[RMDB]
RNA sequence: GGGAACGACUCGAGUAGAGUCGAAAAUAGCUGCAACAAUAUUUGAGUAUCCUGAAAACGGGCUUUUCAGAAUGGUGUUGCCGUAUAAAAUUGUAGGAGUGCAUAGUGGCCCGUAUAGCAGGCAUUAGAGAGCUACAGAUGUUCGCAUCUGUAGCAAGAUAAUUGCACAGUUCGCUGUGCAAUUAUCAAAAGAAACAACAACAACAAC
Reactivity to DMS in 0.01 (KOAc 150mM, MgCl2 10mM, bicine 150mM(pH8.5), 24C), signal-to-noise 3, nucleotides 027 to 156: u000a100g040c020u010g030c010a070a080c030a070a110u000a100u010u000u040g010a210g010u000a070u000c030c010u000g010a030a030a070a020c060g020g000g040c080u000u000u000u000c050a080g020a070a040u000g020g010u000g030u000u000g020c000c060g030u000a120u000a060a060a070a150u000u000g010u000a070g000g020a090g020u000g000c020a090u000a150g030u000g030g000c010c010c020g030u000a080u010a110g020c070a040g020g020c060a070u000u000a130g010a220g000a150g010c000u000a000c000a000g000a020u000g030u000u000c300g030c020a010u000c000u000g020u010a000g010c000a000a000
Reactivity to 2A3 in 0.01 (KOAc 150mM, MgCl2 10mM, bicine 150mM(pH8.5), 24C), signal-to-noise 3, nucleotides 027 to 156: u040a010g020c030u040g010c030a030a030c010a030a110u060a110u130u070u070g020a030g030u060a090u120c010c010u040g030a050a020a020a020c020g010g030g020c010u070u060u080u130c090a080g020a190a050u060g060g000u010g020u040u020g030c000c000g050u100a070u070a160a120a050a060u150u120g060u110a030g010g040a030g020u070g030c020a050u040a110g080u050g040g010c000c000c000g000u000a010u020a030g030c020a010g030g000c000a000u000u080a060g060a020g020a010g090c000u000a000c000a000g010a000u000g030u050u130c180g020c100a000u000c000u010g000u000a000g000c000a000a000